Annotation:
Chemical mapping of a 177-nucleotide RNA with DMS and 2A3. Source: RMDB library OK1LIB, as collected in RNAgym. The 2A3 profile rests on 1,172 reads.
RNA sequence: GGGAACGACUCGAGUAGAGUCGAAAACAAAAAGGUUAACGAGCGUAAUCUGGGAGAUGUAAAAGGAGUUGACAUCUCCUAGAACACCGAAAGGUGGCGGUCCGUUAACUGCAUCUUUCGAAAGAAAGAGGGCAUGAUACUUCGGUAUCAUGCCCUCAAAAGAAACAACAACAACAAC
Reactivity to DMS in 0.01 (KOAc 150mM, MgCl2 10mM, bicine 150mM(pH8.5), 24C), signal-to-noise 1, nucleotides 027 to 126: c060a150a070a070a120a090g000g000u000u000a000a000c000g000a260g030c000g050u000a050a130u000c000u020g000g000g010a000g010a010u000g000u010a010a040a030a060g010g060a190g000u010u000g000a050c000a000u000c000u010c000c000u000a000g000a020a300c000a000c000c000g000a070a100a090g040g000u000g000g000c020g000g030u000c080c090g000u000u000a020a030c000u010g050c300a080u000c010u000u000u000c020g000a030a190a080g000a050a000a020
Reactivity to 2A3 in 0.01 (KOAc 150mM, MgCl2 10mM, bicine 150mM(pH8.5), 24C), signal-to-noise 2, nucleotides 027 to 126: c070a000a140a020a010a030g020g000u000u000a000a000c020g010a000g150c000g030u020a040a240u040c020u000g000g000g000a020g030a000u000g010u000a020a120a090a070g170g040a240g110u100u180g080a000c000a000u010c000u020c010c000u000a000g000a000a000c010a000c010c000g040a010a040a000g000g000u000g030g010c010g020g040u020c030c010g020u010u000a020a020c000u000g000c050a090u040c020u000u050u010c030g040a100a100a050g030a000a020a020